Background
An RNA of 177 nucleotides, treated with 2A3 and DMS and read out base by base. It was measured as part of the RMDB library M2PK50. The RNA was probed in 150 mM KOAc, 10 mM MgCl2 and 150 mM bicine (pH 8.5) at 24 C. For DMS the reverse transcriptase was MarathonRT.
RNA sequence: GGGAACGACUCGAGUAGAGUCGAAAAUCUUAUAUGUUCGCAUAUAAGAAAAGGCGGAGUAGUGAUGGGUCGCGAAAGGCCAUAAAUUAACAAUCACUCAGAUACAGACCUGGUUCGCCAGGUCUAAACCAUAUAUUGUAUUCGUACAAUAUAUGGUAAAAGAAACAACAACAACAAC
Reactivity to 2A3 in 0.01 (KOAc 150mM, MgCl2 10mM, bicine 150mM(pH8.5), 24C), signal-to-noise 4, nucleotides 027 to 126: u000c000u010u010a010u000a000u010g010u010u030c090g000c070a000u000a000u000a010a020g020a030a120a000a010g050g000c060g050g020a080g030u170a000g000u050g020a020u060g080g070g000u040c010g000c040g140a130a050a020g040g020c000c010a020u140a020a070a010u100u110a070a030c030a040a040u020c010a000c040u090c020a020g030a140u110a170c070a040g000a010c000c000u000g000g020u020u030c100g010c030c000a000g000g020u000c000u000a010a010
Reactivity to DMS in 0.01 (KOAc 150mM, MgCl2 10mM, bicine 150mM(pH8.5), 24C), signal-to-noise 7, nucleotides 027 to 126: u000c000u000u000a000u000a000u000g010u000u020c180g030c010a010u000a000u010a000a000g000a020a060a110a090g010g020c070g010g010a140g030u000a060g010u000g010a040u010g000g010g020u010c020g010c060g000a100a110a140g000g000c010c010a060u000a050a050a100u000u010a070a090c130a090a050u010c040a030c020u000c160a120g010a130u010a070c180a030g000a010c000c000u000g000g000u000u010c250g020c000c000a000g000g000u000c000u000a010a070